[RMDB]
RNA sequence: GGGAACGACUCGAGUAGAGUCGAAAAAGAGGGAAAGAACCAGGUUGGCAAACAAGCAAAAAGGCAAGGACGAACCUUCCUCAAGCACUGAAUGUUUUGCGAGUGAAUGGUAAGCGCGAGAAAUGAUGAUCCUUUACUAAUUCGUUAGUAAAGGAUCAAAAGAAACAACAACAACAAC
Reactivity to 2A3 in 0.01 (KOAc 150mM, MgCl2 10mM, bicine 150mM(pH8.5), 24C), signal-to-noise 9, nucleotides 027 to 126: a000g060a040g020g020g030a060a080a060g030a050a040c020c010a020g040g030u060u030g070g000c020a020a050a040c020a090a040g050c010a020a050a050a040a020g050g010c060a020a010g020g010a020c060g040a050a150c000c000u020u020c010c000u020c020a030a010g010c010a020c080u110g060a090a110u090g080u040u090u060u080g020c020g010a030g020u100g060a070a060u080g010g020u050a060a030g030c020g000c030g040a030g070a060a110a040u150g040a040u060
Reactivity to DMS in 0.01 (KOAc 150mM, MgCl2 10mM, bicine 150mM(pH8.5), 24C), signal-to-noise 9, nucleotides 027 to 126: a050g010a070g010g010g000a040a050a060g000a090a100c070c040a060g000g010u000u000g010g010c040a050a060a050c090a050a080g010c050a020a050a070a080a030g010g000c110a030a040g000g010a160c170g010a090a120c030c010u000u000c010c010u000c030a070a120g010c030a070c120u010g010a070a120u010g000u010u010u010u010g010c050g000a070g010u020g000a050a030u010g000g000u010a040a060g010c070g010c050g010a080g000a050a050a060u020g000a170u010